Chemical mapping of a 207-nucleotide RNA with 2A3 and DMS. The data come from the RNA Mapping Database (RMDB), library OK3TST. For 2A3 the reverse transcriptase was SuperScript II with manganese. Values cover nucleotides 27 to 156.
RNA sequence: GGGAACGACUCGAGUAGAGUCGAAAAUACAUGGCCAAAUGACAGCCCCACUUUGCAUGCAUGCCCCUUCCGUACAUACCCGCUAGCUUACUCUCGCUUCAUGCAUGAAUACAGACAAUAUCAUAGACAAAAUGGGAUAAAUAAUGGAGGAAAUCGGAUUGCUCGUCUUAUUCGUAAGACGAGCAAUAAAAGAAACAACAACAACAAC
Reactivity to 2A3 in 0.01 (KOAc 150mM, MgCl2 10mM, bicine 150mM(pH8.5), 24C), signal-to-noise 2, nucleotides 027 to 156: u140a010c070a050u070g000g010c050c010a120a010a090u140g080a070c010a050g040c000c000c000c000a060c090u090u060u140g000c020a040u030g000c040a050u050g040c000c000c000c020u110u000c070c000g060u090a120c000a050u120a070c010c010c020g000c030u030a000g000c000u040u040a080c030u090c040u040c120g050c010u090u080c030a010u020g030c000a010u050g000a010a030u150a050c070a010g130a030c020a040a080u060a020u200c020a020u060a060g080a050c070a010a050a000a180u050g050g060g010a000u050a020a120a000u170a030a050u090g080g000a040g000g110a000a090a000u220c050g060g010
Reactivity to DMS in 0.01 (KOAc 150mM, MgCl2 10mM, bicine 150mM(pH8.5), 24C), signal-to-noise 2, nucleotides 027 to 156: u000a090c020a070u010g070g000c040c020a070a080a130u000g020a100c060a160g030c050c010c000c020a100c100u000u000u010g020c020a070u010g010c020a100u000g040c050c040c000c010u000u000c000c020g010u000a060c130a160u000a130c010c010c000g000c090u010a090g070c000u000u000a090c060u000c010u000c050g000c010u010u000c050a030u010g040c040a130u010g010a080a120u000a180c030a170g000a080c070a040a090u000a300u000c040a070u000a130g000a200c050a060a030a060a120u000g000g030g000a110u000a040a050a070u000a040a110u000g010g020a100g010g010a020a080a050u020c060g000g040